The record gives the reactivity of an RNA of 177 nucleotides to DMS and 2A3.
RNA sequence: GGGAACGACUCGAGUAGAGUCGAAAAGCGCGUAUAUCCGUCUUUUGUGGAGAUUGGUUGUAAGGUAUAUUCGGUUUCUACGGACAGUGAGUACGUGCACAAGGCAUGGGCGGAUGCGACAGACACGCGCAUCCGUGGCAUUCGUGCCACGGAUGCGAAAAGAAACAACAACAACAAC
Reactivity to DMS in 0.01 (KOAc 150mM, MgCl2 10mM, bicine 150mM(pH8.5), 24C), signal-to-noise 1, nucleotides 027 to 126: g020c010g030c030g000u010a000u000a010u000c000c140g060u000c000u000u020u000u040g050u040g010g000a000g000a020u000u010g000g000u040u000g050u010a090a190g020g120u000a040u000a050u000u040c000g000g040u000u000u010c020u000a010c040g010g000a040c010a150g120u030g020a090g010u000a020c010g010u010g030c020a050c120a060a190g000g000c000a050u000g040g000g000c040g010g000a030u000g010c060g000a020c140a120g000a140c200a060c220g000
Reactivity to 2A3 in 0.01 (KOAc 150mM, MgCl2 10mM, bicine 150mM(pH8.5), 24C), signal-to-noise 2, nucleotides 027 to 126: g050c020g000c000g000u000a000u000a050u100c000c010g010u000c000u020u160u110u180g010u040g000g030a000g010a010u100u020g110g060u070u020g080u080a130a270g180g020u160a060u030a030u190u140c050g010g020u000u000u000c000u000a060c010g000g000a020c050a040g080u060g120a010g030u030a000c000g000u000g020c050a000c010a050a040g090g000c000a050u050g010g050g000c000g000g070a050u060g020c000g030a010c000a020g050a060c070a040c100g030